[RMDB]
RNA sequence: GGGAACGACUCGAGUAGAGUCGAAAAAAAUAGCCAGCUAAAUACCUGGCACUGAUGCAUGCAAUGCAUGGGAACUAAACUGCACCACUGCCAGCCUGCUGCUGACCGUUCCCAGAGCGUACAGUGCCUGCAAAACUCUUACUUUAACUGCAGGAGAGAGUCAGUAAUCGUUCGCGAUUACUGACUCAAAAGAAACAACAACAACAAC
Reactivity to 2A3 in 0.01 (KOAc 150mM, MgCl2 10mM, bicine 150mM(pH8.5), 24C), signal-to-noise 1, nucleotides 027 to 156: a000a000a000u140a000g000c010c020a040g000c070u110a250a130a000u260a130c000c010u000g000g000c000a000c010u010g010a010u030g000c040a010u000g090c030a130a130u150g000c000a060u030g000g050g090a040a070c070u150a270a050a000c080u080g000c020a100c010c000a000c070u010g000c020c000a020g000c020c000u060g000c010u060g000c010u010g140a020c040c040g000u000u000c000c000c000a020g080a010g010c020g000u040a090c030a070g060u060g020c000c000u000g020c000a000a000a000a170c020u030c090u170u130a220c040u130u160u110a130a030c040u080g050c020a000g050g000a020g000a000
Chemical mapping of a 207-nucleotide RNA with 2A3.
It was measured as part of the RMDB library OK3TST.